Chemical mapping of a 207-nucleotide RNA with 2A3.
It was measured as part of the RMDB library OK3TST.
The RNA was probed in 150 mM KOAc, 10 mM MgCl2 and 150 mM bicine (pH 8.5) at 24 C.
[RMDB]
RNA sequence: GGGAACGACUCGAGUAGAGUCGAAAAGGUGUGGUGUUUGUAGGCUGUGGGGUCUGGCUGUGUGGCCAAGGUGAAUAGCACAGGUUAGGGUGUGUGCCACACCCCAUGCACCUCAGGGCCAAGCGGGGGCGUGGCUGGCCUUUCAGGUCCAGGCCAGCCCGGGAAGAUGAUUCGUCAUCUUCCCGGGAAAAGAAACAACAACAACAAC
Reactivity to 2A3 in 0.01 (KOAc 150mM, MgCl2 10mM, bicine 150mM(pH8.5), 24C), signal-to-noise 1, nucleotides 027 to 156: g020g000u050g030u040g060g010u040g040u000u110u140g050u030a080g050g000c060u080g040u040g150g010g010g040u050c020u030g010g030c020u040g000u000g000u030g090g030c020c020a070a060g050g000u110g040a070a140u150a150g040c040a030c040a060g040g130u110u130a030g060g100g020u060g000u000g040u070g120c010c000a000c000a020c000c000c000c020a070u160g010c040a070c000c010u030c070a080g020g030g000c100c030a060a010g020c020g000g000g000g000g000c000g000u010g000g040c010u010g000g000c000c000u060u060u060c050a030g000g040u030c070c000a010g000g030c000c000a000g010